An RNA of 177 nucleotides, treated with 2A3 and DMS and read out base by base. The reactions ran in a buffer of 150 mM KOAc, 10 mM MgCl2 and 150 mM bicine (pH 8.5), at 24 C. For DMS the reverse transcriptase was MarathonRT. The data come from the RNA Mapping Database (RMDB), library TTRDEL.
[RMDB]
RNA sequence: GGGAACGACUCGAGUAGAGUCGAAAAGAUAUGGACUAGGCUAGCUCCGUGGUCGGAAACGACCAUCGGAGCUUGGACCCUACAUGUCCUAAGUCAAAACGGUACAUCUGUUCGCAGAUGUACCGAAGCUACCUAAAUAGUUCGCUAUUUAGGUAGCAAAAGAAACAACAACAACAAC
Reactivity to 2A3 in 0.01 (KOAc 150mM, MgCl2 10mM, bicine 150mM(pH8.5), 24C), signal-to-noise 3, nucleotides 027 to 126: g040a020u070a050u180g010g030a010c030u020a020g040g000c000u010a010g000c000u010c000c010g000u010g000g010u000c030g020g000a100a100a030c020g010a000c000c010a020u030c020g000g000a000g000c000u010u020g000g010a010c010c000c000u050a070c080a210u190g010u000c000c010u020a110a030g090u050c040a030a010a050a120c020g000g000u010a000c010a000u000c010u020g040u070u100c300g020c130a000g010a000u010g010u000a000c000c000g000a010a000
Reactivity to DMS in 0.01 (KOAc 150mM, MgCl2 10mM, bicine 150mM(pH8.5), 24C), signal-to-noise 7, nucleotides 027 to 126: g000a070u010a250u010g000g000a030c040u000a050g010g010c030u000a040g000c000u000c000c000g050u000g000g010u000c000g000g010a080a090a170c010g010a010c010c000a000u000c020g030g000a010g000c000u000u000g010g000a120c180c010c030u000a070c260a100u010g010u000c000c000u000a040a120g020u010c070a040a070a130a180c010g010g000u000a010c000a000u000c000u010g000u000u010c230g010c000a010g000a000u000g000u000a010c000c000g000a010a030